[RMDB]
RNA sequence: GGGAACGACUCGAGUAGAGUCGAAAAGAUAUGGACCGGGAAGGGAGCGAAUAUGUCGGAAACGACAUAUCGCGAGGAUCUUCCACGGUCCUAAGUCAAAAGCAUCGGUAGUUCGCUACCGAUGCAACUCACUGUAUCAGUUCGCUGAUACAGUGAGAAAAGAAACAACAACAACAAC
Reactivity to 2A3 in 0.01 (KOAc 150mM, MgCl2 10mM, bicine 150mM(pH8.5), 24C), signal-to-noise 3, nucleotides 027 to 126: g000a000u020a010u060g000g000a000c010c020g030g000g040a000a000g020g010g050a100g000c010g010a120a070u000a000u010g000u010c000g010g000a030a010a000c010g000a000c010a010u000a000u010c010g000c010g050a100g070g020a020u000c000u010u000c000c040a070c060g010g000u000c000c000u010a000a000g010u000c010a000a020a050a170g000c000a000u000c010g010g010u010a020g020u070u130c300g040c180u000a000c000c000g010a000u000g000c000a000a000
Reactivity to DMS in 0.01 (KOAc 150mM, MgCl2 10mM, bicine 150mM(pH8.5), 24C), signal-to-noise 3, nucleotides 027 to 126: g000a030u000a050u020g000g000a020c000c010g000g000g030a020a010g030g000g020a000g010c000g000a030a030u000a000u010g000u000c010g010g000a030a010a050c000g010a010c010a000u000a000u000c010g030c000g010a120g010g000a030u010c000u000u000c000c000a070c010g030g020u010c000c000u000a000a070g010u000c020a130a090a160a190g010c000a000u000c010g000g000u000a010g010u000u010c300g010c000u000a000c000c000g010a010u000g020c010a020a050

Record summary: Structure probing data (2A3 and DMS) for a 177-nucleotide construct. 2A3 is a SHAPE reagent: it acylates the 2'-hydroxyl of flexible nucleotides of all four kinds. It was measured as part of the RMDB library TTRDES.